RNA sequence: GGGAACGACUCGAGUAGAGUCGAAAAGAACUGACAAAUGGAAAAAUGUCGUGGGUGCAGCUGCAAGGAUUUUAAAUGCAGCCCCAGGAUUCCAUUAGGGAUCAGGAUCAGGCUCACGCACUGCGGCCCCUAUUUUAUCGUUCGCGAUAAAAUAGGGAAAAGAAACAACAACAACAAC
Reactivity to 2A3 in 0.01 (KOAc 150mM, MgCl2 10mM, bicine 150mM(pH8.5), 24C), signal-to-noise 9, nucleotides 027 to 126: g030a030a010c020u040g050a020c030a030a070a040u080g030g070a090a070a080a050a100u170g020u080c100g090u040g030g000g020u140g030c120a060g000c030u010g010c020a060a090g120g050a210u060u130u170u300a080a170a070u060g000c000a000g000c000c010c000c000a030g100g000a010u040u000c010c000a020u070u150a120g090g040g040a090u010c010a010g050g020a050u120c050a020g080g000c020u030c030a050c050g030c020a070c060u080g000c030g040g040c000
Reactivity to DMS in 0.01 (KOAc 150mM, MgCl2 10mM, bicine 150mM(pH8.5), 24C), signal-to-noise 5, nucleotides 027 to 126: g010a070a150c040u020g000a020c070a080a060a050u000g000g000a010a030a060a090a110u020g030u010c000g020u000g010g020g020u040g010c150a130g010c000u000g000c020a030a100g010g020a210u050u040u070u040a040a120a170u010g000c000a010g000c000c000c000c010a050g020g010a020u000u010c000c000a090u020u030a070g010g020g010a060u000c000a040g010g010a150u010c090a060g010g020c030u000c050a050c070g000c060a060c070u010g000c080g000g000c100

The record gives the reactivity of an RNA of 177 nucleotides to 2A3 and DMS.
2A3 adducts were read by reverse transcription with SuperScript II with manganese.
The 2A3 profile rests on 10,419 reads.